Chemical mapping of a 177-nucleotide RNA with 2A3 and DMS.
The 2A3 profile rests on 37,687 reads.
[RMDB]
RNA sequence: GGGAACGACUCGAGUAGAGUCGAAAAGGAUCCUCUCACAGGAUUGUCUCUGUGUCCCGAAAAGAGACAACUGUGUGUUCGGGACACCUACAGGAAAACUGUAGGUAUAAAGAGUAUUAGAGGAUCGCUAGAGGAGAGUAUUCGUACUUUCCUCUAGAAAAGAAACAACAACAACAAC
Reactivity to 2A3 in 0.01 (KOAc 150mM, MgCl2 10mM, bicine 150mM(pH8.5), 24C), signal-to-noise 9, nucleotides 027 to 126: g040g000a000u000c000c000u000c000u020c000a020c010a030g070g090a240u060u050g020u010c000u000c010u020g130u020g070u130c020c010c010g020a140a170a010a020g030a000g000a000c010a010a030c020u010g000u000g000u010g020u050u030c030g020g020g050a010c020a000c040c000u000a000c000a010g070g040a150a260a130a070c000u000g000u000a000g000g000u000a000u020a000a020a000g020a000g020u060a050u160u190a030g000a000g010g000a000u000c010g000
Reactivity to DMS in 0.01 (KOAc 150mM, MgCl2 10mM, bicine 150mM(pH8.5), 24C), signal-to-noise 9, nucleotides 027 to 126: g010g000a010u000c000c000u000c000u000c030a040c010a020g000g000a170u010u010g010u000c000u000c000u000g010u010g000u000c010c020c010g010a100a080a150a050g000a020g010a020c010a020a060c010u000g010u000g010u000g010u000u000c010g010g010g020a230c290a020c000c000u000a000c000a010g010g000a120a100a120a160c000u000g000u000a000g000g010u000a020u000a060a100a140g000a040g010u000a080u000u010a030g010a020g020g000a010u000c000g010